[RMDB]
RNA sequence: GGGAACGACUCGAGUAGAGUCGAAAACUGCGGGCCGCGUCAACCGGGCUCGGCGGUACGGUGAACAGGAUGUCUUUUUCCCGGUUUCUCAUCCUGGCCAACGAAAUGGCAGACGAGCAUCUGUCCCGGAUGUCAAUCGUUUCGACGAUUGACAUCCAAAAGAAACAACAACAACAAC
Reactivity to 2A3 in 0.01 (KOAc 150mM, MgCl2 10mM, bicine 150mM(pH8.5), 24C), signal-to-noise 3, nucleotides 027 to 126: c000u030g000c020g010g010g020c040c000g300c020g120u120c060a130a150c110c010g000g000g020c030u040c030g120g000c010g000g040u050a040c030g050g000u060g060a060a020c000a020g050g000a010u010g110u090c020u000u050u000u050u040c000c030c000g000g020u000u040u020c050u000c000a040u010c000c000u010g010g000c010c000a080a030c060g180a120a060a040u110g020g000c010a010g000a070c100g060a060g010c030a030u020c020u050g040u010c000c030c000